[RMDB]
RNA sequence: GGGAACGACUCGAGUAGAGUCGAAAAUUGUAACGCUCACUGCACCUGAGUGGGUAAUCGUCGUGCCGCACGUGAUGGAACGCGCACAACGCUUCUUCGUUAUGGUGCGCCAGUGGCGCUGCGGUUCCGAUACUCGCAGGUUCGCCUGCGAGUAUCGAAAAGAAACAACAACAACAAC
Reactivity to 2A3 in 0.01 (KOAc 150mM, MgCl2 10mM, bicine 150mM(pH8.5), 24C), signal-to-noise 6, nucleotides 027 to 126: u090u070g070u070a090a020c060g000c000u010c020a010c020u080g030c050a100c040c010u080g020a030g010u030g010g010g020u040a020a120u030c020g010u000c020g000u010g010c020c010g000c010a050c070g070u090g080a120u070g020g090a170a130c050g000c000g000c040a020c000a000a020c000g000c090u170u080c020u180u190c090g020u020u060a150u300g070g000u010g000c010g000c000c000a040g020u080g100g000c010g000c020u000g000c000g000g030u020u010c030
Reactivity to DMS in 0.01 (KOAc 150mM, MgCl2 10mM, bicine 150mM(pH8.5), 24C), signal-to-noise 2, nucleotides 027 to 126: u010u020g010u060a080a130c130g000c010u000c010a010c010u000g010c110a220c160c010u040g010a060g000u000g000g030g010u000a040a060u010c050g000u000c070g000u010g020c020c010g060c040a070c040g010u000g020a140u040g060g020a070a100c090g010c030g030c000a050c030a030a000c010g000c300u030u050c080u020u080c000g000u000u030a060u070g010g020u000g010c010g000c080c090a110g030u030g040g000c000g030c210u010g000c000g000g000u000u000c080